[RMDB]
RNA sequence: GGGAACGACUCGAGUAGAGUCGAAAAGAUAUGGAUUUGCCAUACCGAGCCUGAUGACCGUUGAAAGGAAUCGGAAACGAUUCCUGGAGGUCUGACAGGCGUUUGACGUAUGGCAAAUCCUAAGUCACUCAUAGAUGGUCUUCGGACCAUCUAUGAGAAAAGAAACAACAACAACAAC
Reactivity to DMS in 0.01 (KOAc 150mM, MgCl2 10mM, bicine 150mM(pH8.5), 24C), signal-to-noise 2, nucleotides 027 to 126: g000a070u000a300u020g010g000a040u000u000u000g020c010c000a010u000a020c000c000g000a220g010c000c010u000g020a290u020g030a010c020c010g000u020u000g010a260a070a020g000g020a040a010u000c010g000g010a110a030a150c000g020a000u000u000c000c010u010g000g000a030g010g010u000c000u000g000a210c300a000g000g010c000g000u000u020u010g010a180c300g000u000a000u000g000g000c000a000a000a000u000c010c000u000a000a050g000u010c030a300
Structure probing data (DMS) for a 177-nucleotide construct.
For DMS, 1,489 sequencing reads were counted.
It was measured as part of the RMDB library TTRINS.
The reactions ran in a buffer of 150 mM KOAc, 10 mM MgCl2 and 150 mM bicine (pH 8.5), at 24 C.
Values cover nucleotides 27 to 126.